[RMDB]
RNA sequence: GGGAACGACUCGAGUAGAGUCGAAAAUUUUCAGCAAAAUGCAGUUAGGGUGCUAGGAUUUCUCGAAAAUGAAAUUGGUCGUAUUAUGCAAGUAGGGCUUGCUUUUGCGCUCCCCGACUUCACCUCAUGUCGAACGAUAAUUCGUUAUCGUUCGACAAAAAGAAACAACAACAACAAC
Reactivity to DMS in 0.01 (KOAc 150mM, MgCl2 10mM, bicine 150mM(pH8.5), 24C), signal-to-noise 2, nucleotides 027 to 126: u000u000u010u010c040a150g020c110a080a030a070a100u020g020c080a060g000u030u010a110g010g020g000u000g000c060u000a100g000g000a060u020u020u000c060u020c080g020a050a060a050a090u000g010a070a060a060u000u020g010g020u000c040g010u010a040u010u010a050u050g010c020a030a030g040u030a140g040g010g020c000u000u020g010c010u010u000u000u000g010c060g030c120u000c030c000c010c030g000a070c060u000u000c080a070c040c020u030c080a080
Reactivity to 2A3 in 0.01 (KOAc 150mM, MgCl2 10mM, bicine 150mM(pH8.5), 24C), signal-to-noise 3, nucleotides 027 to 126: u050u040u060u050c000a000g060c030a030a090a100a040u230g000c010a000g030u070u120a050g030g040g020u040g020c030u070a030g000g050a040u000u110u000c020u020c020g080a050a030a020a070u160g020a010a020a080u060u040g030g000u030c010g000u020a070u080u010a010u250g010c020a000a020g060u100a140g010g140g130c010u000u000g030c000u100u030u050u020g010c030g020c020u090c000c000c000c000g090a040c000u020u010c040a040c030c000u110c040a070

Source: RMDB libraries RFM100 and RFMREP, as collected in RNAgym. The record gives the reactivity of an RNA of 177 nucleotides to DMS and 2A3.